[RMDB]
RNA sequence: GGGAACGACUCGAGUAGAGUCGAAAAGGAGCUAGGGUUUCAUGGCCGGCAGAGCCCCGCACCUUUGCGGGGUCCGGUGCGCUCCUGACGACCCUUGAAAAUCCGCGGGAAGGAAUAGUUUUCACGCCCUAAGUCUUAUAUUCGUAUAAGACUUAGGAAAAGAAACAACAACAACAAC
Reactivity to 2A3 in 0.01 (KOAc 150mM, MgCl2 10mM, bicine 150mM(pH8.5), 24C), signal-to-noise 7, nucleotides 027 to 126: g020g010a020g010c050u120a050g060g080g040u050u090u110c090a070u130g080g000c020c010g010g020c080a040g020a040g190c010c000c000c000g000c010a080c030c140u180u270u230g010c010g010g000g000g000u010c000c000g000g000u030g020c050g000c010u000c000c000u000g010a010c040g040a010c010c000c000u000u060g080a050a040a010a050u030c020c030g010c050g040g030g030a030a020g060g060a100a130u110a110g030u030u020u020u040c050a040c060g050c000
Reactivity to DMS in 0.01 (KOAc 150mM, MgCl2 10mM, bicine 150mM(pH8.5), 24C), signal-to-noise 9, nucleotides 027 to 126: g000g000a020g010c010u020a100g010g010g010u000u010u010c060a090u030g010g010c210c010g000g010c300a050g000a220g000c010c000c000c010g020c020a100c300c220u020u020u010g010c010g000g010g020g010u000c020c010g000g010u000g010c110g000c010u000c010c000u000g000a100c190g000a080c010c000c020u010u020g000a070a050a060a070u010c020c020g020c060g000g000g000a070a060g010g000a070a080u020a110g000u010u010u000u000c020a070c160g000c300